[RMDB]
RNA sequence: GGGAACGACUCGAGUAGAGUCGAAAAUUUGAGUGGCCCGGCUGAAAUUGCUGGUCACUACAUUGAAUCAGUCAUUAAGGCCAACGCUGCAUUGUGCAAGCUUGAGGGACAAGGCGUUCGGUAUAACGGAUUGACUUGGCAUAUGCGAGGAGAGAAACACAUUAUUGUCAUUCGUGACAAUAAUGUGAAAAGAAACAACAACAACAAC
Reactivity to 2A3 in 0.01 (KOAc 150mM, MgCl2 10mM, bicine 150mM(pH8.5), 24C), signal-to-noise 8, nucleotides 027 to 156: u080u030u090g030a010g000u020g000g000c070c110c130g020g000c030u040g060a070a080a100u220u160g000c010u020g000g000u010c000a000c010u060a100c020a030u040u080g040a060a050u050c030a030g060u020c020a020u060u090a080a060g060g000c000c000a020a010c020g010c020u050g030c040a090u070u160g030u080g060c030a070a080g030c050u100u120g060a100g040g030g030a030c030a050a030g020g010c020g010u030u070c080g040g000u080a090u050a180a040c040g010g020a020u030u060g030a020c000u020u040g040g020c040a060u070a050u190g040c040g030a030g030g030a040g010a000g010a030a080a000
Reactivity to DMS in 0.01 (KOAc 150mM, MgCl2 10mM, bicine 150mM(pH8.5), 24C), signal-to-noise 3, nucleotides 027 to 156: u000u000u000g030a080g040u000g010g030c050c010c080g100g080c010u000g010a060a110a080u000u010g000c000u000g030g020u000c000a100c030u000a050c060a080u020u000g010a110a110u000c020a050g020u000c070a100u000u000a100a180g020g020c000c030a070a100c080g030c010u000g020c050a190u000u000g020u000g000c000a080a080g030c070u000u010g020a130g010g030g030a080c020a030a080g000g010c030g000u000u000c050g030g050u000a100u000a090a110c050g010g010a050u010u000g030a040c030u000u000g020g010c030a060u000a080u000g020c030g020a100g020g000a120g010a180g000a140a130a190